[RMDB]
RNA sequence: GGGAACGACUCGAGUAGAGUCGAAAACAGCCCUUGACCAGGAAGGUACAACAGCUUUUCUAUACAGAGGACAUGGCCUCAAGAUUUGCUGAUGGGCUCUGCUUAUUUUGGAACUGUAAUGUACCAACGUGAAUAUGUUGUUCGCAACAUAUUCACGAAAAGAAACAACAACAACAAC
Reactivity to DMS in 0.01 (KOAc 150mM, MgCl2 10mM, bicine 150mM(pH8.5), 24C), signal-to-noise 3, nucleotides 027 to 126: c210a170g010c020c000c000u000u000g020a140c120c090a150g020g000a130a080g010g000u000a010c010a060a080c030a050g000c200u000u000u000u000c020u000a110u000a070c090a060g000a030g000g000a110c050a060u010g010g030c000c120u010c120a080a110g010a130u000u000u000g020c010u000g000a030u000g000g000g000c010u000c040u010g010c090u010u010a060u000u010u010u000g000g010a020a040c000u000g000u000a080a100u010g000u000a030c000c000a060a190
Reactivity to 2A3 in 0.01 (KOAc 150mM, MgCl2 10mM, bicine 150mM(pH8.5), 24C), signal-to-noise 4, nucleotides 027 to 126: c040a050g050c000c020c030u050u120g110a070c050c000a050g130g040a130a080g020g050u020a010c010a020a010c000a010g000c040u050u050u030u000c000u010a040u020a040c020a020g010a000g060g040a010c000a040u050g020g020c010c020u100c030a080a110g040a290u150u160u090g000c000u100g090a070u010g000g060g020c020u000c000u000g010c000u100u060a070u080u220u080u080g010g010a010a010c000u020g010u040a070a100u070g020u020a020c040c000a010a030

An RNA of 177 nucleotides, treated with DMS and 2A3 and read out base by base. 2A3 adducts were read by reverse transcription with SuperScript II with manganese. The RNA was probed in 150 mM KOAc, 10 mM MgCl2 and 150 mM bicine (pH 8.5) at 24 C. The 2A3 profile rests on 3,406 reads.